An RNA of 207 nucleotides, treated with 2A3 and read out base by base. Reactivities are given for positions 27 through 156. It was measured as part of the RMDB library ARCHII. The reactions ran in a buffer of 150 mM KOAc, 10 mM MgCl2 and 150 mM bicine (pH 8.5), at 24 C.
[RMDB]
RNA sequence: GGGAACGACUCGAGUAGAGUCGAAAAUCGCUUUCGAUCCCUCGAUCUGCCACGUCUGUUCGAAGAGUAGUCUUCGUGGCAACUGGCAGUUAAACCGUGUAGUACCGAUGGAGGUUGGAAACAAUGCACAUCACUACCGGGUCUUGGGCAGUGCGAUCUUUCCAUAAGGCUUCGGCCUUAUGGAAAGAAAAGAAACAACAACAACAAC
Reactivity to 2A3 in 0.01 (KOAc 150mM, MgCl2 10mM, bicine 150mM(pH8.5), 24C), signal-to-noise 3, nucleotides 027 to 156: u040c030g010c040u120u200u160c110g110a280u180c000c020c010u010c010g010a010u000c000u000g000c000c000a070c150g050u050c160u070g040u060u010c000g000a000a000g020a020g060u300a080g140u080c010u000u000c010g030u090g040g030c000a000a000c000u000g000g000c000a000g000u010u110a070a040a010c010c000g070u110g000u110a020g000u040a090c120c160g010a000u000g000g060a130g070g060u030u000g020g000a020a050a010c010a030a000u170g120c090a010c000a060u010c000a000c020u000a000c000c000g030g000g010u000c010u010u010g000g010g000c040a070g070u030g070c000g000a030u000